Notes: The record gives the reactivity of an RNA of 177 nucleotides to 2A3 and DMS. It was measured as part of the RMDB library RFM100. In probing experiments dimethyl sulfate is read out at A N1 and C N3, which are open when not base-paired. Reactivities are given for positions 27 through 126. Conditions: 150 mM KOAc, 10 mM MgCl2 and 150 mM bicine (pH 8.5), 24 C. For DMS, 1,192 sequencing reads were counted.

RNA sequence: GGGAACGACUCGAGUAGAGUCGAAAAUGCGUUGAAUAUUGCUACUACAUUCUUGAAAAAGUGAUGUAGAUUUAUAGCCCAUAACUUUUUUGAAUUACAUCGACGAUACGGCGUCGAAAGAAAAAUAGAAGUGACUAGAGUUCGCUCUAGUCACUUCAAAAGAAACAACAACAACAAC
Reactivity to 2A3 in 0.01 (KOAc 150mM, MgCl2 10mM, bicine 150mM(pH8.5), 24C), signal-to-noise 3, nucleotides 027 to 126: u100g000c030g040u050u300g090a160a050u270a080u170u170g000c020u000a080c000u000a020c000a000u000u020c000u020u040g010a000a020a000a020a000g020u030g000a000u010g020u020a000g010a040u030u220u030a150u030a040g000c000c000c000a030u040a050a060c080u060u020u000u010u000u050g100a090a080u230u000a100c080a130u050c000g010a000c040g030a080u020a180c090g110g020c030g080u010c020g010a020a010a010g020a000a030a010a020a010u080a010
Reactivity to DMS in 0.01 (KOAc 150mM, MgCl2 10mM, bicine 150mM(pH8.5), 24C), signal-to-noise 1, nucleotides 027 to 126: u000g000c000g040u000u060g010a120a240u040a040u000u010g070c000u000a040c000u010a030c000a010u020u000c000u000u010g000a000a000a000a000a000g020u020g000a040u000g000u000a000g000a080u110u000u100a220u000a220g000c030c020c010a050u000a050a050c000u000u000u000u000u000u000g000a190a170u080u050a030c170a120u000c020g020a000c000g000a110u030a200c180g000g060c000g090u000c000g040a000a100a040g050a000a020a090a020a000u000a040